[RMDB]
RNA sequence: GGGAACGACUCGAGUAGAGUCGAAAAACAUAUGGCAUGUGGUCCGAAGAUCAUUAUCUUUUUGGAUGAACUUGAUGAUCCAAAUGUGAGAAUCAUUUUAGAAUGCAGAAUUUAAAUUACAACAUUGCUAUGAAUCAACGUUCGCGUUGAUUCAUAGAAAAGAAACAACAACAACAAC
Reactivity to DMS in 0.01 (KOAc 150mM, MgCl2 10mM, bicine 150mM(pH8.5), 24C), signal-to-noise 1, nucleotides 027 to 126: a150c040a050u000a070u020g010g050c040a080u010g010u010g000g000u000c040c010g040a080a010g000a040u000c120a070u000u000a130u000c020u000u000u000u010u000g030g020a060u010g000a110a110c100u000u010g010a080u000g060a060u000c000c040a010a070a070u000g030u010g020a100g020a180a130u000c030a000u000u000u000u000a080g000a060a010u000g000c050a060g040a120a130u000u000u000a060a100a040u000u030a110c110a050a110c080a130u010u000g000
Reactivity to 2A3 in 0.01 (KOAc 150mM, MgCl2 10mM, bicine 150mM(pH8.5), 24C), signal-to-noise 2, nucleotides 027 to 126: a020c070a020u170a070u130g150g000c010a060u150g050u050g090g000u000c000c010g000a000a010g010a000u060c060a030u070u220a050u130c010u050u160u010u120u140g050g010a020u050g030a070a000c000u080u040g010a030u060g000a000u010c020c010a020a100a150u210g020u080g010a040g050a050a010u040c000a010u080u000u060u060a140g030a090a020u030g030c060a010g100a080a010u060u140u070a100a090a070u120u050a030c030a070a000c000a090u010u170g000